The record gives the reactivity of an RNA of 177 nucleotides to DMS. Reactivities are given for positions 27 through 126.
RNA sequence: GGGAACGACUCGAGUAGAGUCGAAAAACCCGGACAACGAUCCGGGCCGCCUCAACCUGAUCGUGCGGAUGGGUGCCGACAAGGUCGGCGACCACCUGCCGCGCCUGAUCCAGGCCAUCCAGCGCGAUGGACUAGCUAUCUUCGGAUAGCUAGUCCAAAAAGAAACAACAACAACAAC
Reactivity to DMS in 0.01 (KOAc 150mM, MgCl2 10mM, bicine 150mM(pH8.5), 24C), signal-to-noise 1, nucleotides 027 to 126: a250c000c000c000g020g000a040c010a180a160c240g010a140u000c000c000g000g000g000c060c090g000c000c000u000c090a030a020c020c030u000g020a050u000c020g030u010g000c020g000g000a040u020g000g010g000u000g010c000c080g000a000c070a140a050g000g000u000c020g000g000c000g000a030c160c110a120c210c060u010g040c010c010g030c200g000c040c060u000g000a170u000c050c040a210g000g000c020c040a010u000c010c010a090g060c010g000c020g010a020